Chemical mapping of a 207-nucleotide RNA with 2A3 and DMS.
RNA sequence: GGGAACGACUCGAGUAGAGUCGAAAAAAGGAUUUCGAUCCUUUGUGUUCCUAAGUCCGAAAUCACUGCUUGGUGCCUUGCGAAGAACUAUCGGAAACGAUAGGGAGCAAGUCUCAAGCAUAUUUCGGAUAUGGAGGGCAUCCGGAUUCGUCCGGAAACCACCUUUAUCUUUCGAGAUAAAGGUGGUAAAAGAAACAACAACAACAAC
Reactivity to 2A3 in 0.01 (KOAc 150mM, MgCl2 10mM, bicine 150mM(pH8.5), 24C), signal-to-noise 3, nucleotides 027 to 156: a000a000g130g000a100u210u180u220c220g060a040u050c010c010u050u000u010g070u040g040u040u050c050c000u050a160a050g040u000c000c000g010a000a000a000u000c000a000c040u010g010c000u030u030g030g100u070g150c000c000u000u000g000c020g170a300a020g000a090a040c000u000a000u000c010g000g070a110a030a020c010g000a000u000a000g000g000g000a010g000c010a010a000g010u000c000u000c010a000a000g000c020a010u010a000u020u000u000c000g000g000a000u000a010u030g030g020a030g050g040g010c020a070u030c000c000g000g010a040u080u110c230g060u010c060c000g000g000a050a000
Reactivity to DMS in 0.01 (KOAc 150mM, MgCl2 10mM, bicine 150mM(pH8.5), 24C), signal-to-noise 3, nucleotides 027 to 156: a010a020g020g020a040u000u010u020c300g010a040u000c000c000u000u000u010g010u010g030u000u000c000c010u000a080a190g010u000c010c000g000a020a010a000u000c030a070c050u010g020c010u000u000g000g020u000g020c060c000u000u000g040c000g000a140a220g010a220a210c000u000a010u000c000g000g010a250a140a270c010g010a020u000a000g010g010g000a300g020c000a010a020g000u000c010u010c000a010a010g000c000a010u000a000u000u000u000c000g000g010a000u000a040u000g020g010a080g000g030g000c100a120u000c000c000g010g000a100u000u010c300g030u000c000c000g020g010a000a070
The 2A3 profile rests on 3,345 reads. For DMS the reverse transcriptase was MarathonRT. Conditions: 150 mM KOAc, 10 mM MgCl2 and 150 mM bicine (pH 8.5), 24 C. For DMS, 7,423 sequencing reads were counted.